[RMDB]
RNA sequence: GGGAACGACUCGAGUAGAGUCGAAAAGCAUCUUCUGGGCUUCUACAGCCGCGUGGCCGCCUCCCUGGCGCAGGUCUUCCCUGAUAUGGCCGCCGCACUCCUGCGCUCCCUGGAGGAGGAGUUUGCCAUUAUAAGAUGCAUUCGUGCAUCUUAUAAUAAAAGAAACAACAACAACAAC
Reactivity to 2A3 in 0.01 (KOAc 150mM, MgCl2 10mM, bicine 150mM(pH8.5), 24C), signal-to-noise 6, nucleotides 027 to 126: g010c000a050u030c040u160u050c050u120g020g040g010c020u100u040c070u220a100c070a060g030c010c020g040c040g060u080g050g020c010c010g020c010c010u010c000c010c030u030g040g000c010g000c010a000g010g010u030c030u040u040c030c000c010u020g060a080u040a090u270g050g000c020c000g000c020c010g020c020a030c030u020c000c010u030g010c010g000c010u060c040c010c020u080g030g020a040g020g010a010g020g020a020g010u060u150u110g030c000c010
Reactivity to DMS in 0.01 (KOAc 150mM, MgCl2 10mM, bicine 150mM(pH8.5), 24C), signal-to-noise 9, nucleotides 027 to 126: g010c060a060u000c050u000u000c050u000g010g010g010c030u000u010c120u000a100c140a100g010c020c030g020c110g010u000g010g010c030c050g010c020c010u000c020c010c170u000g000g010c020g020c030a030g000g000u000c090u000u000c030c000c010u000g010a130u000a100u000g000g000c020c040g010c030c030g020c080a090c080u000c010c010u000g000c020g010c020u000c100c070c070u000g010g000a070g010g010a050g000g000a080g010u000u000u000g020c040c090